Chemical mapping of a 177-nucleotide RNA with 2A3. The 2A3 profile rests on 667 reads. The RNA was probed in 150 mM KOAc, 10 mM MgCl2 and 150 mM bicine (pH 8.5) at 24 C. Values cover nucleotides 27 to 126.
[RMDB]
RNA sequence: GGGAACGACUCGAGUAGAGUCGAAAACCGAUGCGCUCAUAGAACUCGCGCGUCCCUGGCUCGCGUGCCGCGCCGUUGGGCAGACAUAUCUUGGUCGGGCAGGAUUCCUUCAGCACGUCGAUGAUGCCGUGCCAGGGCGUUUCGACGCCCUGGCACGAAAAGAAACAACAACAACAAC
Reactivity to 2A3 in 0.01 (KOAc 150mM, MgCl2 10mM, bicine 150mM(pH8.5), 24C), signal-to-noise 2, nucleotides 027 to 126: c000c000g020a040u070g040c040g000c040u050c070a080u080a140g070a000a000c030u000c060g050c010g000c000g040u050c010c000c000u000g100g000c040u150c040g060c040g080u070g110c010c000g100c080g050c030c010g150u100u210g010g030g060c020a050g070a020c040a000u160a130u130c060u110u120g130g000u020c070g000g000g000c040a030g000g080a020u060u070c020c000u100u080c090a060g010c070a000c020g050u030c030g020a110u140g000a000u120g140c000